[RMDB]
RNA sequence: GGGAACGACUCGAGUAGAGUCGAAAAUCUGCAGGGUCACGCGCACGUUGUAUGAGCCCCGCCUGUUCCAUGCGACGAAGCAUCACCGUGGCGCUCGCCGGGGUGAUGCCCAGGGCCUCGGCGAUGGUCUGGAUUCUCUUUUCGAAGAGAAUCCAGAAAAAGAAACAACAACAACAAC
Reactivity to DMS in 0.01 (KOAc 150mM, MgCl2 10mM, bicine 150mM(pH8.5), 24C), signal-to-noise 1, nucleotides 027 to 126: u010c010u010g050c060a000g000g010g000u010c030a060c100g000c100g000c090a130c030g010u000u000g000u020a050u010g030a150g020c040c010c040c080g000c010c020u030g010u000u000c050c070a100u000g020c090g010a090c070g000a110a200g020c050a040u000c030a050c050c030g010u000g000g030c010g020c250u000c170g010c010c000g010g000g000g020u000g020a030u010g030c010c050c040a170g000g000g000c010c010u000c050g010g010c040g030a050u000g010g000
Chemical mapping of a 177-nucleotide RNA with DMS. For DMS, 1,246 sequencing reads were counted. It was measured as part of the RMDB library OK2TST. The RNA was probed in 150 mM KOAc, 10 mM MgCl2 and 150 mM bicine (pH 8.5) at 24 C. Reactivities are given for positions 27 through 126. For DMS the reverse transcriptase was MarathonRT.